[RMDB]
RNA sequence: GGGAACGACUCGAGUAGAGUCGAAAAAGUAAAAGCCAGAUCUAUCAUGCUAGAAGAUGGAACAGUAAUGCUCUCAGCCAGUACUAUCUGACUAACAUCUCCAGGAAGUUUGUAUGGGCCAUGGCUGGCUUUAACUUCUACACAUCUGGAAACUUCAGAUUAAUCAUGACUUCGGUCAUGAUUAAUCAAAAGAAACAACAACAACAAC
Reactivity to DMS in 0.01 (KOAc 150mM, MgCl2 10mM, bicine 150mM(pH8.5), 24C), signal-to-noise 2, nucleotides 027 to 156: a060g000u000a050a050a060a090g040c000c000a060g000a100u010c060u000a140u010c070a080u000g010c040u010a100g020a050a050g040a080u000g020g020a060a100c020a050g040u000a090a140u000g040c060u020c010u010c150a080g080c020c030a020g050u000a110c090u010a080u000c020u000g010a070c020u010a070a220c030a040u010c030u000c030c040a130g030g010a070a060g000u000u010u000g000u000a070u010g010g000g010c060c020a090u000g020g030c070u000g020g000c000u020u000u010a040a030c040u000u000c010u000a050c040a060c090a030u000c030u030g000g000a110a100a090c000u000u000c040a300
Reactivity to 2A3 in 0.01 (KOAc 150mM, MgCl2 10mM, bicine 150mM(pH8.5), 24C), signal-to-noise 4, nucleotides 027 to 156: a000g070u070a030a050a010a000g010c000c000a010g000a020u000c020u080a110u120c050a080u130g040c030u040a050g030a090a020g010a120u080g030g020a070a030c020a030g050u120a090a070u070g020c040u020c000u000c030a020g060c070c030a010g030u010a040c020u030a030u110c010u010g070a080c000u030a070a030c020a070u040c040u040c100c020a040g080g050a100a030g070u060u120u080g030u100a090u070g020g030g000c070c050a090u050g030g000c000u000g000g000c000u000u020u000a020a020c000u020u000c020u090a050c070a010c010a130u010c030u060g000g000a060a030a070c010u080u090c030a030